[RMDB]
RNA sequence: GGGAACGACUCGAGUAGAGUCGAAAAAGCGCCAGCUUGGGUGGAGGCGACGUUGGGAUACCACCCUGAUCGUAUCGGAGUUCUAACCUGGUACCGUGAUCCGGUAUGGGGACAGUGUCAGGUGGGCAGUCAGGUCAUAGUUCGCUAUGACCUGACUAAAAGAAACAACAACAACAAC
Reactivity to DMS in 0.01 (KOAc 150mM, MgCl2 10mM, bicine 150mM(pH8.5), 24C), signal-to-noise 1, nucleotides 027 to 126: a100g040c070g000c050c020a110g000c060u000u000g000g010g010u000g010g020a110g010g020c060g020a040c070g000u010u030g000g010g020a220u000a100c040c040a090c070c010c030u000g000a020u020c130g010u010a200u010c080g010g010a080g020u010u000c020u000a110a090c030c030u000g000g010u000a020c020c020g010u000g010a300u020c020c010g010g030u060a040u020g010g000g010g000a080c300a060g000u020g000u010c020a000g010g000u000g000g000g000c110